[RMDB]
RNA sequence: GGGAACGACUCGAGUAGAGUCGAAAAGCCUUCGUCAACAUGACCCAGCCGGUCCAAGUGACUUUUCCCUGGCUGAGUCAGUAUUGCGGGGUGAAGCGCGCUGCGGCGGAACUGGGGCGGGCAGCACCCAUCCCCAUAGGUUCGCCUAUGGGGAUGGAAAAGAAACAACAACAACAAC
Reactivity to 2A3 in 0.01 (KOAc 150mM, MgCl2 10mM, bicine 150mM(pH8.5), 24C), signal-to-noise 4, nucleotides 027 to 126: g000c020c000u090u270c070g110u110c020a060a070c030a150u040g000a000c000c010c000a000g020c020c030g050g020u030c020c030a300a110g070u110g210a050c000u120u070u060u070c020c020c030u030g030g000c000u010g000a000g020u020c010a000g030u050a070u050u160g020c020g000g020g000g020u060g060a080a010g050c060g020c010g000c090u080g020c020g040g000c030g040g030a060a040c050u090g010g000g030g020c030g000g030g010c020a010g050c000a020c020
Reactivity to DMS in 0.01 (KOAc 150mM, MgCl2 10mM, bicine 150mM(pH8.5), 24C), signal-to-noise 4, nucleotides 027 to 126: g000c010c010u000u000c030g020u010c070a070a050c130a100u000g010a030c010c020c000a020g020c000c000g010g010u000c030c040a140a140g020u010g010a050c050u000u000u010u000c020c020c020u000g010g020c000u000g000a030g010u000c020a020g020u010a090u000u010g010c040g000g000g010g010u020g010a080a070g020c080g000c030g010c030u000g000c060g030g020c060g000g010a060a110c070u000g000g000g010g020c130g000g000g010c040a070g020c100a120c140